The data come from the RNA Mapping Database (RMDB), library OK3TST. Structure probing data (2A3) for a 207-nucleotide construct.
[RMDB]
RNA sequence: GGGAACGACUCGAGUAGAGUCGAAAAUCGGUGCCCCGCGCAGUGCGCCGUGAGUGAUGGCCUCGCCGCUGUGCCAUGUACCAUCCACCCCUUGGCAGGUAUCAAACUCACCAAACGCGUGCAGCUUGGGGGUUUCACCGGCCAGCCACGCCAAUACCGUUUAUCGUCUGUUCGCAGACGAUAAACGAAAAGAAACAACAACAACAAC
Reactivity to 2A3 in 0.01 (KOAc 150mM, MgCl2 10mM, bicine 150mM(pH8.5), 24C), signal-to-noise 1, nucleotides 027 to 156: u050c000g000g000u020g010c000c000c000c000g000c030g010c020a010g020u020g020c000g020c000c080g040u000g000a000g000u000g040a190u080g000g000c000c000u040c180g000c010c000g080c120u110g060u170g070c090c000a040u030g040u080a080c000c050a110u200c030c010a130c040c020c020c030u020u030g000g000c010a010g000g000u010a060u220c020a010a040a080c000u000c000a040c050c040a000a100a060c070g000c000g000u050g000c020a030g040c060u030u050g040g020g000g020g030u040u100u140c000a000c000c000g020g040c000c000a010g010c010c000a110c070g050c040c040a160a050u190a210c080
Overview
For 2A3, 730 sequencing reads were counted. The reactions ran in a buffer of 150 mM KOAc, 10 mM MgCl2 and 150 mM bicine (pH 8.5), at 24 C.